Source: RMDB library OK2TRN, as collected in RNAgym. An RNA of 177 nucleotides, treated with DMS and 2A3 and read out base by base. 2A3 adducts were read by reverse transcription with SuperScript II with manganese. The 2A3 profile rests on 21,338 reads.
RNA sequence: GGGAACGACUCGAGUAGAGUCGAAAAAACUCCGGCGUGUUCGUCUUCCCGAUCACGAUCGCGCCGGCGUCCUCGAGCCGCUGGACGAUCGCCGAGGUCCGGUCGGCGACGUGGUCGGCGAACAGCGGCUUUCACGAUAAUUCGUUAUCGUGAAAGCAAAAGAAACAACAACAACAAC
Reactivity to DMS in 0.01 (KOAc 150mM, MgCl2 10mM, bicine 150mM(pH8.5), 24C), signal-to-noise 7, nucleotides 027 to 126: a100a050c110u000c020c030g010g010c010g030u000g010u000u000c010g010u000c140u010u000c090c010c010g010a100u000c090a030c010g000a080u000c010g020c010g010c010c000g000g000c300g000u000c010c010u000c060g010a120g020c030c020g000c050u000g010g010a190c060g000a110u010c070g010c020c010g000a040g010g000u000c040c050g010g010u010c070g020g010c020g020a010c030g010u000g010g000u000c010g000g000c020g000a030a060c050a070g010c040g020
Reactivity to 2A3 in 0.01 (KOAc 150mM, MgCl2 10mM, bicine 150mM(pH8.5), 24C), signal-to-noise 9, nucleotides 027 to 126: a000a020c090u070c060c020g070g010c110g050u070g010u010u030c020g020u010c090u180u080c040c010c000g020a050u040c020a000c030g110a290u020c010g000c000g000c010c000g000g000c010g100u090c000c000u020c020g030a070g030c040c020g030c120u180g130g090a170c050g030a120u150c050g000c010c000g020a010g000g020u000c020c010g050g040u090c110g230g000c000g010a000c000g010u010g020g010u020c010g000g010c010g000a020a010c000a020g040c010g060